[RMDB]
RNA sequence: GGGAACGACUCGAGUAGAGUCGAAAAAAAGUCAUCAUCCUCAGCAUCAAUAAACAUGAUUGGUUUGUAACGAUAUGACGUCAUGUUAAAAUUUUGCAUAAAAGGGCCUUCAGCGUGCGGGUUUUCACAUAUGAUGAGCGUUCGCGCUCAUCAUAUGAAAAGAAACAACAACAACAAC
Reactivity to 2A3 in 0.01 (KOAc 150mM, MgCl2 10mM, bicine 150mM(pH8.5), 24C), signal-to-noise 2, nucleotides 027 to 126: a000a000a000g040u050c030a050u000c000a040u010c050c000u030c000a010g060c000a040u020c000a030a130u100a190a060a020c000a020u040g020a040u130u130g250g040u100u090u000g040u050a150a100c160g030a120u030a050u300g030a010c000g020u010c020a010u010g010u020u050a020a050a020a020u040u130u100u040g030c030a030u080a140a150a000a000g030g020g010c010c000u020u040c030a010g000c030g030u030g050c040g000g130g000u020u020u080u130c050a070
Reactivity to DMS in 0.01 (KOAc 150mM, MgCl2 10mM, bicine 150mM(pH8.5), 24C), signal-to-noise 3, nucleotides 027 to 126: a040a050a060g000u010c030a050u010c030a090u000c030c010u010c090a120g010c020a030u010c070a040a030u010a130a030a040c020a000u000g000a030u000u010g030g020u010u010u000g020u010a070a120c230g010a160u000a040u010g020a070c060g000u000c000a000u020g000u000u010a040a050a100a070u000u000u000u010g010c060a080u000a050a050a120a110g000g010g010c040c030u010u000c050a060g020c050g000u010g020c080g010g000g010u000u010u010u000c070a100